Conditions: 150 mM KOAc, 10 mM MgCl2 and 150 mM bicine (pH 8.5), 24 C. An RNA of 207 nucleotides, treated with 2A3 and DMS and read out base by base. The DMS profile rests on 6,320 reads.

RNA sequence: GGGAACGACUCGAGUAGAGUCGAAAAUGGAUAAACUUGCUCAAUGCUCUGGAAAUUGUAGAGGAAUACGUGGAGGAACAAGAGAUCAUCAUGCAAACAACAAGACAGAUGGCGUUACGGUUGGCAGCUAUGCCUGUUCGUGGACGACGAGCGGAGAUGCUCGAAUUAUUUUCGAAUAAUUCGAGCAAAAAGAAACAACAACAACAAC
Reactivity to 2A3 in 0.01 (KOAc 150mM, MgCl2 10mM, bicine 150mM(pH8.5), 24C), signal-to-noise 6, nucleotides 027 to 156: u110g040g020a060u080a120a080a040c040u050u110g020c010u020c080a060a070u070g010c010u000c050u080g070g060a090a140a130u150u080g040u060a050g020a030g040g050a050a070u100a090c070g000u060g010g020a030g010g010a040a020c010a070a060g030a000g010a060u030c010a020u020c020a060u130g040c050a040a080a090c020a040a030c020a080a020g070a040c020a030g060a050u050g040g000c030g050u060u080a020c020g020g010u030u020g060g000c010a020g000c030u090a060u180g020c010c000u020g010u050u060c030g010u020g030g030a030c020g010a020c010g010a020g010c000g020g020a090g000a040
Reactivity to DMS in 0.01 (KOAc 150mM, MgCl2 10mM, bicine 150mM(pH8.5), 24C), signal-to-noise 3, nucleotides 027 to 156: u010g020g020a120u010a030a080a090c070u000u000g000c040u020c050a050a130u000g010c040u000c030u010g000g000a070a080a110u010u010g030u000a080g010a110g040g020a090a090u010a050c080g050u000g030g000a120g020g020a060a120c050a100a130g010a110g020a080u010c060a050u000c030a000u010g000c040a070a070a090c070a050a060c040a050a130g010a120c030a090g000a100u000g010g010c050g010u000u000a030c030g020g000u000u010g010g010c040a100g020c070u000a050u000g000c030c010u000g000u010u000c030g030u000g000g010a080c060g010a070c020g020a080g020c050g030g000a120g000a170
Reactivities are given for positions 27 through 156. 2A3 adducts were read by reverse transcription with SuperScript II with manganese. It was measured as part of the RMDB library OK3TST.